[RMDB]
Description: Conditions: 150 mM KOAc, 10 mM MgCl2 and 150 mM bicine (pH 8.5), 24 C. Chemical mapping of a 177-nucleotide RNA with 2A3. The 2A3 profile rests on 1,721 reads. Values cover nucleotides 27 to 126.

RNA sequence: GGGAACGACUCGAGUAGAGUCGAAAAGACUGCGUGCACUGGAGACGAUAUCGAGCCGGAAAUUAAUCGAUAAUGUCUCGAGUAGUGGAUACGAUCCGGCAAGUAUCGACUACUUGUGCUCGUAGGAGACUGCGUCACGAUUCGUCGUGACGCAGUCAAAAGAAACAACAACAACAAC
Reactivity to 2A3 in 0.01 (KOAc 150mM, MgCl2 10mM, bicine 150mM(pH8.5), 24C), signal-to-noise 2, nucleotides 027 to 126: g070a000c020u030g000c000g010u020g000c020a000c020u030g010g000a000g000a000c020g000a030u000a000u090c030g010a020g020c010c000g020g060a150a120a030u300u300a020a080u050c010g000a000u030a010a120u160g050u000c000u000c010g010a000g010u070a000g000u020g130g000a000u000a020c000g010a020u060c000c000g000g000c060a080a010g000u000a000u000c020g070a010c000u040a060c000u000u030g000u000g010c010u000c000g000u000a000g000g020a040